Annotation:
Chemical mapping of a 207-nucleotide RNA with 2A3 and DMS. Source: RMDB library M2RFPK, as collected in RNAgym. The reactions ran in a buffer of 150 mM KOAc, 10 mM MgCl2 and 150 mM bicine (pH 8.5), at 24 C. For DMS, 2,114 sequencing reads were counted. For DMS the reverse transcriptase was MarathonRT.
[RMDB]
RNA sequence: GGGAACGACUCGAGUAGAGUCGAAAAGCAAGUCGCAUCGCAAAACCGCGGCAAGUGGAGUUAGCGAGAGGAGGCUGGGUUUUGGCUUCCUUAAGCAAUCGGUCACAGAGAAGGUGUGGUCGUUACCUAGACAGUUUUCUGUUCGCAGAAAACUGAACUCUAAUACAAGCUUCGGCUUGUAUUAGAGAAAAGAAACAACAACAACAAC
Reactivity to 2A3 in 0.01 (KOAc 150mM, MgCl2 10mM, bicine 150mM(pH8.5), 24C), signal-to-noise 5, nucleotides 027 to 156: g030c020a060a010g020u030c020g010c040a060u070c060g060c150a100a080a040a030c060c050g000c010g030g000c080a080a030g030u050g030g050a130g040u100u180a020g020c010g000a020g010a010g020g000a010g020g000c020u080g090g130g090u100u110u170u300g020g000c000u000u000c000c000u010u010a030a000g000c000a000a030u050c010g000g010u010c010a010c020a010g100a010g050a170a050g120g050u030g010u010g010g010u000c010g030u040u070a090c000c000u030a060g040a110c010a000g000u000u000u000u010c000u010g050u040u060c190g000c080a000g000a000a010a000a000c000u000g000a010a020
Reactivity to DMS in 0.01 (KOAc 150mM, MgCl2 10mM, bicine 150mM(pH8.5), 24C), signal-to-noise 1, nucleotides 027 to 156: g000c020a080a140g000u010c010g060c030a150u000c030g040c070a090a060a070a270c040c120g010c000g060g020c000a080a150g000u020g000g000a200g000u000u000a180g020c030g010a300g000a050g000g030a000g040g010c010u010g040g000g010u000u000u030u000g020g000c050u000u000c020c000u010u000a020a300g020c000a050a070u000c000g010g040u000c000a020c050a150g030a100g000a100a060g040g020u030g000u000g030g040u000c010g020u020u000a040c040c020u020a180g010a170c000a010g010u000u000u000u000c000u000g000u000u000c300g030c000a040g010a020a000a010a030c000u000g000a020a100